[RMDB]
RNA sequence: GGGAACGACUCGAGUAGAGUCGAAAAGUCGGGUCCGUGGGAUGCCCUUCCCGAUUCCGUCCAUCCCCACCCCCGGGUGUCCCCCCAGGAAUGGCGGGACCCCACUCGACAGGGUCCGCGUACCAUCAACCUGUCUCCUUCGGGAGACAGAAAAGAAACAACAACAACAAC
Reactivity to 2A3 in 0.01 (KOAc 150mM, MgCl2 10mM, bicine 150mM(pH8.5), 24C), signal-to-noise 7, nucleotides 027 to 129: g080u060c030g000g010g010u030c070c060g040u170g010g010g000a020u080g030c020c000c030u020u010c010c000c020g010a050u200u040c030c030g080u060c070c030a090u070c010c000c000c000a040c010c000c010c010c000g020g000g000u110g040u020c000c000c000c010c000c020a000g020g090a150a050u000g020g020c010g000g000g000a010c010c000c000c000a040c030u130c050g090a050c030a080g000g000g000u010c000c000g100c010g020u070a060c010c010a020u060c000a010a060c000
Reactivity to DMS in 0.01 (KOAc 150mM, MgCl2 10mM, bicine 150mM(pH8.5), 24C), signal-to-noise 3, nucleotides 027 to 129: g050u020c130g020g040g060u010c050c050g000u090g000g000g000a030u020g030c000c000c000u000u000c020c030c020g010a120u100u100c030c090g040u030c050c020a170u040c060c000c020c030a300c030c000c000c000c000g020g000g010u000g040u000c000c000c000c000c000c000a050g000g080a110a060u000g020g030c170g000g000g000a040c010c010c000c000a030c020u070c080g030a110c170a120g030g000g010u020c040c010g110c070g020u040a080c020c020a050u080c070a080a110c120

Annotation:
This 170-nucleotide RNA was probed chemically with 2A3 and DMS. DMS adducts were read by reverse transcription with MarathonRT. Reactivities are given for positions 27 through 129. It was measured as part of the RMDB library 15KLIB. For DMS, 13,560 sequencing reads were counted.